[RMDB]
The data come from the RNA Mapping Database (RMDB), library OK2TRN. This 177-nucleotide RNA was probed chemically with DMS and 2A3.
RNA sequence: GGGAACGACUCGAGUAGAGUCGAAAAUCUAUGGUUUCCAAUACAAAAGUAGAUUUGGUUGAACCACCAACUAGGCUAAGAGAUAAUUUAGACAUUCAAAUGUUAGAAAAAAUAUUGAAUGAGUCUAAACAAAAGAUAGGUUCGCCUAUCUUUUGUUAAAAGAAACAACAACAACAAC
Reactivity to DMS in 0.01 (KOAc 150mM, MgCl2 10mM, bicine 150mM(pH8.5), 24C), signal-to-noise 4, nucleotides 027 to 126: u000c030u000a040u010g010g010u000u000u000c060c060a090a110u000a120c190a050a080a110a220g030u000a020g000a060u010u010u000g000g000u010u000g010a110a240c080c060a100c120c020a050a080c100u000a040g010g010c050u020a050a120g010a170g010a100u010a050a080u000u010u000a040g010a060c000a030u000u000c020a010a030a070u000g010u000u000a100g030a000a010a080a080a040a020u000a060u000u000g000a020a010u000g010a110g000u000c000u000a020
Reactivity to 2A3 in 0.01 (KOAc 150mM, MgCl2 10mM, bicine 150mM(pH8.5), 24C), signal-to-noise 1, nucleotides 027 to 126: u010c010u020a070u050g080g000u040u000u000c060c000a030a090u130a160c040a030a230a130a010g030u110a060g000a110u030u000u140g010g000u040u100g080a030a010c000c000a010c030c010a090a030c030u050a050g150g000c040u050a080a000g020a010g040a140u050a160a040u100u060u100a010g010a000c000a010u000u000c030a090a090a120u090g010u030u030a030g250a030a200a020a000a000a040u080a030u040u010g010a010a000u010g010a020g080u000c010u010a120
The reactions ran in a buffer of 150 mM KOAc, 10 mM MgCl2 and 150 mM bicine (pH 8.5), at 24 C. The 2A3 profile rests on 1,214 reads.